[RMDB]
RNA sequence: GGGAACGACUCGAGUAGAGUCGAAAAGUCGGCAAGGAGAACUGGCUCCCACGGUCGCAUACGUGCUUCAAUCGACUCGACUUGCCGCCAUACAGAAGCUACGAUCAGCUCGUCGAGAAGUUGAGCAGAGGCGCAUAUGAUUCGUCAUAUGCGCCUCAAAAGAAACAACAACAACAAC
Reactivity to DMS in 0.01 (KOAc 150mM, MgCl2 10mM, bicine 150mM(pH8.5), 24C), signal-to-noise 1, nucleotides 027 to 126: g010u010c030g030g000c020a100a060g000g050a130g010a060a090c160u000g010g000c020u000c000c070c000a160c090g000g000u000c150g000c120a040u020a030c110g020u000g010c040u000u010c040a100a090u000c000g000a170c020u000c010g000a020c040u000u010g000c000c040g010c070c050a040u000a100c120a100g010a050a140g000c060u010a090c140g000a060u010c050a110g000c050u000c090g010u010c000g020a160g010a140a180g000u000u000g040a000g000c070a110
Reactivity to 2A3 in 0.01 (KOAc 150mM, MgCl2 10mM, bicine 150mM(pH8.5), 24C), signal-to-noise 2, nucleotides 027 to 126: g070u050c030g000g050c040a050a040g100g010a110g070a140a110c070u070g060g040c030u030c040c000c000a010c050g000g060u060c020g020c010a010u080a150c030g090u070g000c010u120u090c030a070a130u100c020g050a040c000u000c030g030a010c000u000u030g040c010c050g030c010c000a120u160a120c030a010g110a090a000g080c020u080a070c080g090a080u080c020a010g030c010u040c020g040u030c010g000a050g050a100a000g030u060u050g020a000g000c060a040

Structure probing data (DMS and 2A3) for a 177-nucleotide construct. The reactions ran in a buffer of 150 mM KOAc, 10 mM MgCl2 and 150 mM bicine (pH 8.5), at 24 C. For 2A3, 1,452 sequencing reads were counted.